[RMDB]
RNA sequence: GGGAACGACUCGAGUAGAGUCGAAAAGAUAUGGAACGAGGAUCCUCGGUAUCACACGAGCGACGAAGUUAGUCGGAAACGACUAACAGAGCUCUAUGUGAGUACCGAGGAUCCUCGUUCCUAAGUCCUCAGGAAUGUAGUUCGCUACAUUCCUGAGAAAAGAAACAACAACAACAAC
Reactivity to DMS in 0.01 (KOAc 150mM, MgCl2 10mM, bicine 150mM(pH8.5), 24C), signal-to-noise 2, nucleotides 027 to 126: g000a120u000a300u000g010g000a000a010c000g020a030g000g010a000u000c000c010u000c000g000g020u000a070u000c010a000c010a080c300g000a020g000c010g010a250c300g020a120a150g000u010u000a000g000u020c000g030g000a090a150a170c010g030a000c000u010a000a000c000a040g020a210g010c010u010c020u000a060u000g000u000g010a090g000u000a000c030c010g010a000g010g000a000u000c000c010u000c000g010u000u000c020c000u000a020a080g010u000c030
This 177-nucleotide RNA was probed chemically with DMS. Reactivities are given for positions 27 through 126. Conditions: 150 mM KOAc, 10 mM MgCl2 and 150 mM bicine (pH 8.5), 24 C. For DMS, 1,558 sequencing reads were counted. Reactivities are rounded to 0.1 and cut off at 0 and 3.